[RMDB]
This 207-nucleotide RNA was probed chemically with 2A3.
RNA sequence: GGGAACGACUCGAGUAGAGUCGAAAAGGGGUCGCAUCUCUAGCGUGUGGAGCUUGGAUUUAUAGGCUUGUCGCUGAAGCCUCCACGGCGAGGCCUAUUGUCAGCUCCAUCGGGUGCGACGGAGGCACCCAAAUCCAACCAGUUCGCUGGUUGGAAAGCCAUGAGAUGAGUUCGCUCAUCUCAUGGCAAAAGAAACAACAACAACAAC
Reactivity to 2A3 in 0.01 (KOAc 150mM, MgCl2 10mM, bicine 150mM(pH8.5), 24C), signal-to-noise 3, nucleotides 027 to 156: g060g020g030g020u000c010g010c000a020u020c100u050c090u220a090g140c040g080u300g030u000g050g000a030g030c090u070u140g230g060a030u080u300u130a230u190a010g000g000c000u070u150g240u170c000g010c010u030g030a050a000g020c000c000u000c000c000a000c000g000g020c000g010a000g000g020c000c000u090a140u140u300g020u010c020a000g000c010u000c000c000a000u000c000g000g010g000u010g000c010g000a000c000g000g000a000g000g020c000a030c000c000c000a000a030a050u040c010c000a000a000c000c000a000g000u080u030c110g070c200u000g000g000u020u000g010g000a020a040a000
Conditions: 150 mM KOAc, 10 mM MgCl2 and 150 mM bicine (pH 8.5), 24 C.
The 2A3 profile rests on 1,483 reads.